[RMDB]
RNA sequence: GGGAACGACUCGAGUAGAGUCGAAAAGGGAAAAGCGACGAUUAAAUCGUGCUGAAUGAAGGCGAGUAUAGGUAGCUCGCAGUGGAUUGCAUUGACGACAUCUAUUUUUACUAAAUCUUCUAGUGAGUGAUACUCACCCUUUCGAGGGUGAGUAUCAAAAAGAAACAACAACAACAAC
Reactivity to DMS in 0.01 (KOAc 150mM, MgCl2 10mM, bicine 150mM(pH8.5), 24C), signal-to-noise 5, nucleotides 027 to 126: g010g010g030a120a070a120a000g000c030g010a030c010g000a040u000u060a120a080a300u020c010g000u000g010c010u000g010a110a080u020g000a070a050g000g000c300g000a030g010u000a050u010a080g010g000u000a050g000c270u000c000g000c020a030g000u010g000g000a110u020u020g010c050a060u000u020g010a080c050g000a020c200a090u010c020u000a010u010u000u000u050u010a030c080u000a030a070a070u020c040u000u000c010u000a080g040u030g010a060g010
Reactivity to 2A3 in 0.01 (KOAc 150mM, MgCl2 10mM, bicine 150mM(pH8.5), 24C), signal-to-noise 5, nucleotides 027 to 126: g080g000g030a080a080a000a000g060c060g220a060c000g000a020u070u300a150a060a110u080c000g020u030g000c000u030g040a020a050u120g040a040a010g070g000c070g000a010g000u040a020u040a120g000g030u040a070g000c000u000c020g000c000a000g000u040g040g070a300u220u190g040c040a030u030u080g040a060c040g000a010c020a020u020c010u070a120u000u070u030u000u000a040c020u040a050a100a130u040c020u070u000c040u030a060g120u040g220a070g100

Chemical mapping of a 177-nucleotide RNA with DMS and 2A3. The RNA was probed in 150 mM KOAc, 10 mM MgCl2 and 150 mM bicine (pH 8.5) at 24 C. Values cover nucleotides 27 to 126. DMS adducts were read by reverse transcription with MarathonRT. 2A3 adducts were read by reverse transcription with SuperScript II with manganese.